[RMDB]
RNA sequence: GGGAACGACUCGAGUAGAGUCGAAAAGGCUCAGGAACGAGGAAUUGCUAGUAAUCGCGGACUCAUUAAGACGCGAUGAAUACGUCCCUGUUCUUUGUACACACCGCCCGUCGUUAUCGAAGAUGGAUCAAUGCAACCAAUUCGUUGGUUGCAUUGAAAAAGAAACAACAACAACAAC
Reactivity to DMS in 0.01 (KOAc 150mM, MgCl2 10mM, bicine 150mM(pH8.5), 24C), signal-to-noise 7, nucleotides 027 to 126: g010g010c050u010c020a040g000g000a030a010c020g010a080g000g000a040a050u030u020g060c090u000a080g000u000a100a030u000c010g020c000g010g000a130c050u010c270a130u030u030a100a080g000a130c010g010c000g000a010u000g000a120a160u020a050c030g000u000c010c000c010u000g020u010u000c010u000u010u010g020u010a100c120a120c100a100c050c050g000c060c010c020g010u010c040g020u000u010a080u020c130g000a080a070g010a070u010g000g010a300
Reactivity to 2A3 in 0.01 (KOAc 150mM, MgCl2 10mM, bicine 150mM(pH8.5), 24C), signal-to-noise 9, nucleotides 027 to 126: g020g000c020u020c040a010g030g010a020a010c010g030a060g010g060a070a100u270u210g030c040u040a010g010u050a010a000u000c000g000c010g060g090a250c030u050c090a190u160u230a130a030g020a010c000g000c000g010a010u000g010a010a020u060a020c010g010u010c010c000c000u010g010u000u000c000u060u100u110g060u070a030c050a000c010a010c050c020g020c000c020c000g040u030c020g030u060u110a140u140c080g050a080a040g030a090u110g030g010a000